[RMDB]
Structure probing data (DMS and 2A3) for a 177-nucleotide construct. Reactivities are rounded to 0.1 and cut off at 0 and 3. Values cover nucleotides 27 to 126. The data come from the RNA Mapping Database (RMDB), libraries RFM100 and RFMREP. For DMS the reverse transcriptase was MarathonRT.
RNA sequence: GGGAACGACUCGAGUAGAGUCGAAAAUGUAAGGCGAUGCGGGUGAAGGCAGGAGGCUGAUGGAGAGAGAGACUGGGGGGAAGAAAAGCCGAAAUGGAUUCACGGUGCUUGGGAUAGAGGACGAGAAAGUUAUUACUUGCUUCGGCAAGUAAUAACUAAAAGAAACAACAACAACAAC
Reactivity to DMS in 0.01 (KOAc 150mM, MgCl2 10mM, bicine 150mM(pH8.5), 24C), signal-to-noise 3, nucleotides 027 to 126: u010g000u010a100a100g000g020c030g050a070u020g010c050g000g000g010u020g000a090a060g010g020c050a040g020g020a050g030g010c010u010g010a120u000g000g010a040g010a070g000a100g020a100g020a050c070u000g000g000g000g010g000g050a080a090g000a070a100a080a080g000c050c010g020a040a090a080u030g020g010a110u010u010c100a090c060g000g000u000g010c070u000u010g000g000g000a110u000a070g000a080g030g000a060c080g000a110g000a050a080
Reactivity to 2A3 in 0.01 (KOAc 150mM, MgCl2 10mM, bicine 150mM(pH8.5), 24C), signal-to-noise 3, nucleotides 027 to 126: u160g050u100a040a030g020g030c020g020a000u120g050c050g010g000g000u100g060a060a020g050g030c020a030g000g050a010g000g040c010u030g010a060u040g050g010a030g000a010g000a000g000a000g000a030c090u060g000g020g000g000g030g000a100a000g050a010a130a010a010g050c010c000g030a030a030a040u150g060g060a080u060u060c000a000c060g000g000u060g010c050u060u030g030g000g000a030u050a030g030a020g050g010a050c010g000a040g090a120a160